The record gives the reactivity of an RNA of 177 nucleotides to 2A3 and DMS.
RNA sequence: GGGAACGACUCGAGUAGAGUCGAAAAGAUAUGGAUCGUAGAGGCUUUUGACGAGCUGUACUCGGAAACGAGUACUGCUCGAUAAGCCUUCCGAUCCUAAGUCAAAAGUAGUUCUUCGGAACUACAACUAAACGGAGGAGUUCGCUCCUCCGUUUAGAAAAGAAACAACAACAACAAC
Reactivity to 2A3 in 0.01 (KOAc 150mM, MgCl2 10mM, bicine 150mM(pH8.5), 24C), signal-to-noise 2, nucleotides 027 to 126: g020a000u060a010u090g020g000a010u010c010g030u070a080g040a030g260g020c060u220u230u300u300g300a300c040g000a000g010c010u000g010u000a000c000u000c000g040g000a000a040a050c010g010a010g000u010a000c000u000g000c020u010c000g000a010u030a010a000g020c020c000u000u030c010c010g020a000u020c010c010u010a070a010g030u020c020a050a010a080a210g010u000a000g000u030u000c000u010u130c300g040g000a000a000c020u000a010c000a020a010
Reactivity to DMS in 0.01 (KOAc 150mM, MgCl2 10mM, bicine 150mM(pH8.5), 24C), signal-to-noise 2, nucleotides 027 to 126: g000a000u000a280u000g000g020a010u000c000g010u010a220g010a020g000g000c000u000u000u010u010g010a270c150g000a010g010c000u000g000u010a010c000u000c000g010g010a090a050a090c000g010a000g010u000a000c000u000g000c010u000c000g000a050u000a010a030g000c010c000u000u000c200c020g000a000u000c000c000u000a010a060g010u000c030a100a090a130a120g010u000a000g010u000u010c010u010u010c210g010g000a010a020c000u010a000c000a090a190

Notes:
Reactivities are given for positions 27 through 126. For DMS, 2,601 sequencing reads were counted.